Description:
This 207-nucleotide RNA was probed chemically with 2A3. Values are in units of 0.01, from 0 to 300, in steps of 10. It was measured as part of the RMDB library M2RFOK.
[RMDB]
RNA sequence: GGGAACGACUCGAGUAGAGUCGAAAACUCUUGCACAGAAUCACCUUUCUAUAAUAACCAGUGCAAGAAGGGUUAUUAUACCAUUUAAUGUGCAGAGGCCACGCGGAGUACGAUCGAGGGUACAGCAAAAACGUGAAGUACUUCGGUACUUCACGAAGCAAGUCAUUUUCUUCGGAAAAUGACUUGCAAAAGAAACAACAACAACAAC
Reactivity to 2A3 in 0.01 (KOAc 150mM, MgCl2 10mM, bicine 150mM(pH8.5), 24C), signal-to-noise 1, nucleotides 027 to 156: c000u000c000u050u030g000c010a010c000a000g070a130a140u200c110a250c010c050u070u290u280c110u200a000u000a100a010u020a000a000c000c000a000g010u010g060c010a000a000g050a000a030g000g000g000u000u000a000u000u000a040u020a060c030c050a150u190u190u120a140a050u140g050u050g050c010a000g000a020g000g000c020c000a000c010g020c020g000g000a030g100u300a060c010g070a190u050c040g000a100g010g000g010u050a040c000a010g030c030a040a040a040a040a040c000g000u000g000a000a000g000u000a000c000u000u060c090g040g000u000a000c000u000u000c080a000c000g000a000a000